Chemical mapping of a 207-nucleotide RNA with 2A3 and DMS.
RNA sequence: GGGAACGACUCGAGUAGAGUCGAAAAGCACUGUAUGUUCGCAUACAGUGCAAAAAGCGUACUACUCUUGCGCUAGUCCCACUCCCAAAUAGGAGUGAGGACUUGGACCGAACUACAAGAGUAUCGCAAAAAAGACUAACACUUCGGUGUUAGUCAACACUACUAAGCGUUUCGACGCUUAGUAGUGAAAAGAAACAACAACAACAAC
Reactivity to 2A3 in 0.01 (KOAc 150mM, MgCl2 10mM, bicine 150mM(pH8.5), 24C), signal-to-noise 5, nucleotides 027 to 156: g000c020a000c010u000g010u000a000u000g020u040u120c200g000c120a000u000a010c000a000g000u000g000c000a010a010a010a000a020g070c070g030u110a120c060u010a000c000u020c000u000u000g030c010g010c020u010a010g000u000c010c010c000a000c000u040c000c020c030a250a300a120u300a170g000g000a010g020u010g030a300g030g010a000c000u040u040g010g080a070c060c040g070a150a140c070u110a060c240a020a000g010a010g020u010a020u300c120g000c060a030a120a000a000a000a020g000a000c010u010a000a010c000a000c000u040u110c300g110g000u000g000u010u000a000g000u000c000a000a010
Reactivity to DMS in 0.01 (KOAc 150mM, MgCl2 10mM, bicine 150mM(pH8.5), 24C), signal-to-noise 2, nucleotides 027 to 156: g030c000a000c010u000g020u010a010u000g040u000u020c300g040c000a020u020a010c020a010g030u000g020c000a010a010a030a070a060g000c000g020u000a110c100u000a000c010u000c000u000u000g020c000g050c060u000a030g000u000c000c000c010a020c000u000c000c000c000a030a200a290u010a060g000g000a000g020u000g000a120g060g000a020c010u020u000g010g000a280c170c150g020a100a150c040u010a010c010a020a010g020a020g000u000a020u000c010g000c040a000a030a110a110a090a110g010a040c000u010a000a020c000a030c000u000u000c300g030g040u000g030u000u010a000g000u000c010a020a070
Conditions: 150 mM KOAc, 10 mM MgCl2 and 150 mM bicine (pH 8.5), 24 C. The DMS profile rests on 3,675 reads. Source: RMDB library RNAMAK, as collected in RNAgym.